[RMDB]
The data come from the RNA Mapping Database (RMDB), library OK1LIB. The record gives the reactivity of an RNA of 177 nucleotides to 2A3.
RNA sequence: GGGAACGACUCGAGUAGAGUCGAAAAGGCUGGGCCGUCACCGGCUACGGCGCACAGGGGGCCAGCAGUGAUUAUGUCAUUGCGCUUGAGGGCACGAAAGACGGACGUAAGGCACUGGCUUCCCGUCCGGGGCUUACCUCUUCGGAGGUAAGCCCCGAAAAGAAACAACAACAACAAC
Reactivity to 2A3 in 0.01 (KOAc 150mM, MgCl2 10mM, bicine 150mM(pH8.5), 24C), signal-to-noise 2, nucleotides 027 to 126: g070g050c030u020g020g010g050c040c000g200u300c090a060c010c010g020g000c000u100a200c010g010g000c030g000c000a020c020a060g000g010g010g010g000c010c000a000g000c130a100g030u000g030a200u010u070a010u160g040u000c020a070u000u290g000c000g000c090u010u110g040a190g040g010g110c040a000c140g030a040a000a120g010a000c100g050g000a000c000g000u000a010a030g070g050c050a000c030u000g000g020c020u280u230c000c000c000g010u010c000
The reactions ran in a buffer of 150 mM KOAc, 10 mM MgCl2 and 150 mM bicine (pH 8.5), at 24 C. Values cover nucleotides 27 to 126.